Overview
This 170-nucleotide RNA was probed chemically with DMS and 2A3. The data come from the RNA Mapping Database (RMDB), library 15KLIB. For DMS, 94,605 sequencing reads were counted.
RNA sequence: GGGAACGACUCGAGUAGAGUCGAAAAGUUCCCCUGAUGUCCAGUCCCUCCCCGUUCCUGGAGAAGGGAGACUCGGGAACGCCUAGCAUCUGAGGGACGAAGCCGCCCCCGGGCGCUCCCCUCGGAGAUCACCAUGCUUUCGAGCAUGGUAAAAGAAACAACAACAACAAC
Reactivity to DMS in 0.01 (KOAc 150mM, MgCl2 10mM, bicine 150mM(pH8.5), 24C), signal-to-noise 9, nucleotides 027 to 129: g010u000u030c010c010c010c120u010g000a100u040g020u000c000c080a060g030u020c010c010c000u020c030c020c030c040g000u020u020c040c010u010g030g030a100g000a110a080g020g020g010a090g000a030c030u000c050g010g030g000a050a040c070g010c050c030u000a100g030c110a110u000c020u000g010a030g000g000g000a140c120g000a050a140g000c040c040g000c020c010c010c070c090g000g010g030c040g030c050u000c050c000c000c010u030c010g000g000a040g020a100u000c100
Reactivity to 2A3 in 0.01 (KOAc 150mM, MgCl2 10mM, bicine 150mM(pH8.5), 24C), signal-to-noise 9, nucleotides 027 to 129: g000u010u010c010c000c000c020u090g080a070u150g080u020c030c010a030g040u010c010c000c000u010c010c000c000c010g060u100u060c020c030u090g090g020a090g020a120a070g050g020g010a030g020a010c010u010c010g000g000g010a020a010c010g030c010c020u060a070g050c030a100u000c000u010g010a010g010g010g010a040c070g040a050a010g050c090c030g030c010c000c000c020c030g030g000g000c010g010c010u010c000c000c000c000u000c000g010g000a020g010a020u120c010
For 2A3 the reverse transcriptase was SuperScript II with manganese. Values cover nucleotides 27 to 129. The RNA was probed in 150 mM KOAc, 10 mM MgCl2 and 150 mM bicine (pH 8.5) at 24 C. DMS (dimethyl sulfate) methylates the pairing face of unpaired adenines and cytosines.